RNA sequence: GGGAACGACUCGAGUAGAGUCGAAAAGAAGAGAAUACGGUGUAAGAACAGCCCAACUUACACCGUGCGGCAUAACGGAAACAGUGAUGUCGAAAAUUGGGCUGCUCGUGAAUGAACGAAAGAAGAAACCAUUAGUGGACUUCGGUCCACUAAUGGUAAAAGAAACAACAACAACAAC
Reactivity to DMS in 0.01 (KOAc 150mM, MgCl2 10mM, bicine 150mM(pH8.5), 24C), signal-to-noise 1, nucleotides 027 to 126: g010a200a080g000a250g000a040a240u000a000c000g000g000u000g020u000a030a000g010a110a070c060a050g000c040c050c000a080a030c010u000u000a000c000a050c020c000g010u000g000c000g000g000c000a040u000a040a010c020g000g000a240a080a050c250a050g000u030g020a050u000g020u000c000g010a070a030a010a060u000u000g020g000g000c000u000g000c130u000c040g030u010g020a040a000u000g000a060a000c090g020a020a090a080g000a090a040g000a030a040
Reactivity to 2A3 in 0.01 (KOAc 150mM, MgCl2 10mM, bicine 150mM(pH8.5), 24C), signal-to-noise 4, nucleotides 027 to 126: g130a030a000g130a000g060a070a060u130a070c000g000g010u000g000u000a000a020g030a130a020c000a030g030c000c000c000a040a130c000u000u000a000c000a000c000c000g000u010g000c020g000g000c020a010u030a040a000c060g150g010a260a090a060c050a090g010u010g040a010u010g010u010c020g010a000a010a000a150u130u070g000g000g000c030u040g020c030u010c020g020u030g130a180a160u160g040a070a040c040g040a020a040a100g110a050a040g060a040a090
The record gives the reactivity of an RNA of 177 nucleotides to DMS and 2A3. Conditions: 150 mM KOAc, 10 mM MgCl2 and 150 mM bicine (pH 8.5), 24 C. The DMS profile rests on 1,734 reads. For DMS the reverse transcriptase was MarathonRT. For 2A3 the reverse transcriptase was SuperScript II with manganese.